[RMDB]
RNA sequence: GGGAACGACUCGAGUAGAGUCGAAAAGGAAGAUGGGGAGCUCAGAUUUACGAGAAGCAUCAGCGAGUUUGGCUCGGUACUUUCAACGAGGAAGAAGAAGCUGCGUCUUCUUACGACAUCGCCGUGAAAACUACCCUUAGUUCGCUAAGGGUAGUUUAAAAGAAACAACAACAACAAC
Reactivity to 2A3 in 0.01 (KOAc 150mM, MgCl2 10mM, bicine 150mM(pH8.5), 24C), signal-to-noise 4, nucleotides 027 to 126: g040g010a010a060g020a050u090g020g000g000g040a010g000c010u010c060a070g020a160u070u080u230a070c060g020a020g000a120a010g030c030a040u100c040a010g030c000g020a060g060u030u090u090g090g000c000u000c010g010g040u080a070c020u050u150u130c010a070a040c030g020a030g040g020a030a050g010a020a010g040a050a020g080c080u110g050c040g070u010c020u060u000c010u030u050a070c040g010a010c010a070u050c030g020c040c010g030u060g030a040
Reactivity to DMS in 0.01 (KOAc 150mM, MgCl2 10mM, bicine 150mM(pH8.5), 24C), signal-to-noise 7, nucleotides 027 to 126: g010g010a060a050g020a060u000g020g010g010g010a070g020c050u010c050a070g010a140u000u010u010a100c120g010a120g000a070a060g010c080a050u000c040a050g020c050g000a100g020u000u000u000g020g000c010u000c050g020g010u010a050c140u000u000u000c090a070a110c070g000a080g010g010a110a090g000a060a040g010a040a100g000c030u010g020c160g010u010c020u010u000c020u000u000a090c070g000a100c110a040u010c060g000c040c060g020u000g000a080

This 177-nucleotide RNA was probed chemically with 2A3 and DMS. Values cover nucleotides 27 to 126. The RNA was probed in 150 mM KOAc, 10 mM MgCl2 and 150 mM bicine (pH 8.5) at 24 C. The 2A3 profile rests on 4,820 reads.